The data come from the RNA Mapping Database (RMDB), library OK1LIB.
This 177-nucleotide RNA was probed chemically with 2A3.
The reactions ran in a buffer of 150 mM KOAc, 10 mM MgCl2 and 150 mM bicine (pH 8.5), at 24 C.
RNA sequence: GGGAACGACUCGAGUAGAGUCGAAAAGCGAUGAGGUGUAUUUCGCCGAUGUCACCGUGUGUCCUGCCGGGAGUGCCUGGGUCACCGUGCGCAGCCAGCGGCUUUCGGUGUUCGAACUGCAGGCCCGCUACUCCGGCGCAUUCGUGCGCCGGAGUAGAAAAGAAACAACAACAACAAC
Reactivity to 2A3 in 0.01 (KOAc 150mM, MgCl2 10mM, bicine 150mM(pH8.5), 24C), signal-to-noise 1, nucleotides 027 to 126: g030c020g000a050u120g080a050g010g020u100g000u070a140u000u240u020c050g000c080c040g070a110u190g100u060c040a040c030c000g070u040g000u000g090u170c010c010u000g070c000c000g030g010g000a010g030u180g000c000c030u040g060g000g000u050c030a020c030c020g090u130g030c040g000c000a000g050c000c000a020g000c000g010g020c000u000u080u030c000g000g000u000g010u030u190c130g030a020a010c000u020g050c060a030g100g080c000c080c000g010